Notes:
Conditions: 150 mM KOAc, 10 mM MgCl2 and 150 mM bicine (pH 8.5), 24 C. Chemical mapping of a 207-nucleotide RNA with 2A3.
RNA sequence: GGGAACGACUCGAGUAGAGUCGAAAACGCGCGGGCGCUGGCGGGCGACACCCUCGUGGCGACGGCGGCGACCCGACAGGCCCGCACACUGACCGAGUGGUUCGACGCGGGGCACUGCGCGCUGCUGGGCGGCGACACGCCGUGUGACGCGUGGCGCUGCCCUUAAUUGGUUCGCCAAUUAAGGGCAAAAAGAAACAACAACAACAAC
Reactivity to 2A3 in 0.01 (KOAc 150mM, MgCl2 10mM, bicine 150mM(pH8.5), 24C), signal-to-noise 1, nucleotides 027 to 156: c030g090c010g000c000g010g040g000c160g030c180u000g000g000c000g020g000g000c030g020a040c000a080c100c020c000u020c060g090u110g120g150c220g080a050c040g020g020c020g000g010c010g020a300c010c000c000g000a000c000a010g030g060c010c000c000g000c000a010c000a000c000u090g030a000c000c010g030a020g030u110g060g040u110u100c050g060a040c010g040c030g020g030g030g030c020a040c070u010g000c000g000c000g010c020u020g010c010u100g040g150g000c000g000g000c030g020a050c020a030c160g000c000c000g040u070g040u020g040a020c010g000c000g000u020g010g000c000g000c020